Source: RMDB library 15KLIB, as collected in RNAgym. The record gives the reactivity of an RNA of 170 nucleotides to 2A3 and DMS. The RNA was probed in 150 mM KOAc, 10 mM MgCl2 and 150 mM bicine (pH 8.5) at 24 C. For DMS the reverse transcriptase was MarathonRT. Reactivities are rounded to 0.1 and cut off at 0 and 3. For DMS, 20,587 sequencing reads were counted.
RNA sequence: GGGAACGACUCGAGUAGAGUCGAAAACCUCUCGAGAAUCGGCAAAUGGGGCCCCUCGCUCGUAUCUCCGAGAGGAGACGAGAAAGAGGAGGAUCUCCCUUUGCCAUCCGAGGGAACUACGUUCUCCAAGCACGGGAGUUCGCUCCCGUGAAAAGAAACAACAACAACAAC
Reactivity to 2A3 in 0.01 (KOAc 150mM, MgCl2 10mM, bicine 150mM(pH8.5), 24C), signal-to-noise 9, nucleotides 027 to 129: c010c000u010c000u000c010g300a300g030a170a120u150c110g010g000c000a010a030a060u210g010g000g020g000c010c000c000c000u000c000g030c010u000c000g070u080a200u030c000u000c000c010g040a030g000a020g090g000a000g010a000c010g010a000g000a080a240a040g010a010g040g030a170g040g010a050u060c080u080c020c000c000u000u000u000g000c000c000a000u000c000c000g000a020g000g010g010a030a040c070u140a060c130g010u000u000c050u000c010c010a040a020g060
Reactivity to DMS in 0.01 (KOAc 150mM, MgCl2 10mM, bicine 150mM(pH8.5), 24C), signal-to-noise 4, nucleotides 027 to 129: c060c030u000c010u010c020g150a200g050a120a070u000c190g020g050c020a000a020a020u050g010g010g000g010c000c030c000c020u010c020g000c030u000c010g040u060a140u050c000u030c000c000g020a160g010a190g020g000a000g020a030c040g010a040g070a020a090a040g010a050g000g000a160g000g000a130u090c070u060c010c010c050u030u000u040g000c020c010a020u030c010c000g010a030g060g000g040a100a080c030u090a180c080g000u020u010c010u050c000c060a120a130g040